Chemical mapping of a 207-nucleotide RNA with 2A3. It was measured as part of the RMDB library OK3TST. Conditions: 150 mM KOAc, 10 mM MgCl2 and 150 mM bicine (pH 8.5), 24 C. 2A3 adducts were read by reverse transcription with SuperScript II with manganese.

[RMDB]
RNA sequence: GGGAACGACUCGAGUAGAGUCGAAAAUAGCAUGGAGAGUGAGGGAAUCUCUGGGAAUGGGACACUGAUGGAUGCUGGCAUGUGGGCCCAGGGAUAAGGCUGUCACCUGCCCUCCUCCAAGCUGCGUGGACCUCUCCAUUGGCAGCUGGCCAGGAGACAGUUCAAGGUACUUCGGUACCUUGAACUGAAAAGAAACAACAACAACAAC
Reactivity to 2A3 in 0.01 (KOAc 150mM, MgCl2 10mM, bicine 150mM(pH8.5), 24C), signal-to-noise 2, nucleotides 027 to 156: u160a040g010c070a100u060g020g000a070g010a020g100u300g020a020g010g010g030a010a030u000c000u000c000u000g000g000g030a060a100u110g040g090g060a060c040a020c080u100g060a070u130g080g040a050u160g070c060u010g050g030c070a120u130g000u100g030g060g010c010c020c000a000g000g000g000a010u040a010a060g020g020c110u110g100u170c070a010c040c000u050g010c000c000c000u000c020c000u000c010c010a000a010g000c010u000g010c020g020u040g030g070a060c000c000u000c000u040c040c000a150u040u050g060g000c010a040g110c150u100g260g000c000c010a000g000g000a000g000a010